[RMDB]
RNA sequence: GGGAACGACUCGAGUAGAGUCGAAAAUCAGUUCGUCGUCAGAUAGCACGCAGCGGACGUUACCCGCGUUUGACUCUGCGGAUACCAGGCAAUUGUGCGAGUGGCCCGCGUGGUGAGCGCAGAGUCAGAAACGUAAUCCAUUCGUGGAUUACGUUUCAAAAGAAACAACAACAACAAC
Reactivity to 2A3 in 0.01 (KOAc 150mM, MgCl2 10mM, bicine 150mM(pH8.5), 24C), signal-to-noise 1, nucleotides 027 to 126: u110c030a030g020u020u010c020g030u020c010g020u010c050a050g110a300u170a060g120c170a010c040g030c070a050g040c010g010g010a010c020g020u040u090a100c000c010c000g030c060g050u050u100u070g000a000c000u000c000u000g000c000g060g110a030u070a060c000c000a010g080g010c040a130a170u200u150g060u160g110c040g060a130g140u180g130g010c010c030c030g010c060g040u020g000g000u030g030a080g120c000g000c000a000g000a000g000u000c000a000
Reactivity to DMS in 0.01 (KOAc 150mM, MgCl2 10mM, bicine 150mM(pH8.5), 24C), signal-to-noise 6, nucleotides 027 to 126: u020c130a130g000u000u000c020g000u000c020g020u010c020a180g010a160u060a090g000c140a060c020g030c130a100g010c020g000g020a010c000g010u020u020a150c020c000c010g010c160g020u010u030u010g000a010c000u000c000u010g000c000g000g000a150u020a020c010c000a030g000g020c000a120a100u040u030g020u030g010c030g020a130g020u050g000g000c000c100c170g010c020g000u000g000g010u000g020a080g010c020g000c010a000g000a030g000u000c010a020